[RMDB]
RNA sequence: GGGAACGACUCGAGUAGAGUCGAAAAUUGGACAUCAGCCCUUUAAACUCUGUACAGGAAUCUGACAGCGAUUCCGAUUUGUCUUCCGAAGGCACGAUGAUUAUGAUGACGUCCGAAGAAUGUCAAAACGUAUGUGAAAGUUCGCUUUCACAUACGUAAAAGAAACAACAACAACAAC
Reactivity to DMS in 0.01 (KOAc 150mM, MgCl2 10mM, bicine 150mM(pH8.5), 24C), signal-to-noise 7, nucleotides 027 to 126: u040u020g010g010a030c040a060u010c040a070g010c060c050c050u010u020u010a090a090a160c060u000c030u000g000u000a070c140a150g000g020a020a020u010c040u000g000a090c160a070g000c150g000a070u010u010c010c010g000a130u020u020u000g010u010c050u000u010c070c040g000a130a070g000g010c030a050c140g010a060u010g010a100u020u020a040u010g000a150u010g010a060c080g000u000c020c010g020a100a100g010a100a070u020g000u020c060a070a060a110
Reactivity to 2A3 in 0.01 (KOAc 150mM, MgCl2 10mM, bicine 150mM(pH8.5), 24C), signal-to-noise 8, nucleotides 027 to 126: u090u050g060g010a010c000a040u050c020a060g040c010c000c000u030u120u060a090a040a030c040u050c040u090g060u070a050c070a070g000g030a010a030u010c030u110g160a080c070a040g050c060g070a040u090u000c010c000g010a020u090u060u110g030u000c000u040u000c030c050g090a080a050g030g010c030a010c100g050a040u120g020a030u040u170a060u210g090a040u030g020a020c030g020u000c020c030g010a060a030g050a080a100u140g050u110c040a060a060a010

The record gives the reactivity of an RNA of 177 nucleotides to DMS and 2A3. DMS adducts were read by reverse transcription with MarathonRT. The data come from the RNA Mapping Database (RMDB), library OK1LIB. Conditions: 150 mM KOAc, 10 mM MgCl2 and 150 mM bicine (pH 8.5), 24 C. For DMS, 17,306 sequencing reads were counted.